Overview
Structure probing data (2A3) for a 207-nucleotide construct.
RNA sequence: GGGAACGACUCGAGUAGAGUCGAAAAUGAGUCAGGGCGGGACUCAGAGGGACGCAUGACAAGUUCAGGGAGUUGACAGCUGUCUGGAAGGGCACGUCUGCUCAGACCGCAGGGUAGGGAGUGGUCAGCAGGGAGACAUGUCCACUGGUGCAGCGGAGCACCGUACUGGAUUCGUCCAGUACGGUGCAAAAGAAACAACAACAACAAC
Reactivity to 2A3 in 0.01 (KOAc 150mM, MgCl2 10mM, bicine 150mM(pH8.5), 24C), signal-to-noise 3, nucleotides 027 to 156: u130g020a010g070u070c040a070g010g060g030c080g080g000g020a030c040u040c080a010g030a020g020g000g000a020c060g020c060a080u090g030a090c050a150a050g030u080u060c030a050g010g070g030a050g010u070u040g060a040c040a020g000c020u040g030u020c040u030g080g070a160a100g110g000g010c000a000c000g020u010c010u040g110c000u000c020a020g010a030c000c000g010c020a020g010g040g060u090a030g010g010g020a060g010u020g020g010u020c020a020g000c040a020g020g030g010a020g020a000c020a020u020g010u020c000c000a010c020u030g000g040u180g040c010a000g040c060g020g020a040

The data come from the RNA Mapping Database (RMDB), library OK3TST.